[RMDB]
RNA sequence: GGGAACGACUCGAGUAGAGUCGAAAAGAAGAUGGUCAGGAAUUUGGAUUAGAGGGCUUGGUGCCACUUAUCCUGGAUGAUCUGACUGAAUCAUGAUUCCAAUCCUCUACUUAUACUGACCCAGGGAACUAAGAAAUACCUUCGGGUAUUUCUUAGUAAAAGAAACAACAACAACAAC
Reactivity to 2A3 in 0.01 (KOAc 150mM, MgCl2 10mM, bicine 150mM(pH8.5), 24C), signal-to-noise 3, nucleotides 027 to 126: g040a010a010g020a020u130g010g010u020c020a010g010g050a050a060u070u110u090g010g030a010u030u070a060g080a260g050g030g010c090u110u220g220g030u200g020c000c000a030c010u010u010a000u000c000c030u040g060g080a030u040g010a030u050c010u020g070a050c040u030g040a040a040u040c020a040u090g090a170u100u040c030c000a000a030u000c000c000u020c000u010a060c010u060u050a050u050a200c040u030g040a020c000c010c000a020g020g050g020a020
Reactivity to DMS in 0.01 (KOAc 150mM, MgCl2 10mM, bicine 150mM(pH8.5), 24C), signal-to-noise 4, nucleotides 027 to 126: g000a100a070g010a090u000g020g000u000c030a110g000g000a110a050u000u000u000g010g010a050u000u010a020g010a160g010g010g010c080u000u010g020g030u000g020c010c000a030c010u000u000a030u000c060c090u000g020g000a040u000g000a150u010c010u000g010a070c130u010g010a150a070u000c040a050u000g010a190u000u000c020c010a050a260u000c020c020u000c020u000a030c050u000u000a090u000a100c100u000g000a270c000c000c050a100g010g000g010a100
Structure probing data (2A3 and DMS) for a 177-nucleotide construct. Reactivities are given for positions 27 through 126. For DMS the reverse transcriptase was MarathonRT. It was measured as part of the RMDB library OK2TRN. The reactions ran in a buffer of 150 mM KOAc, 10 mM MgCl2 and 150 mM bicine (pH 8.5), at 24 C. For DMS, 4,150 sequencing reads were counted.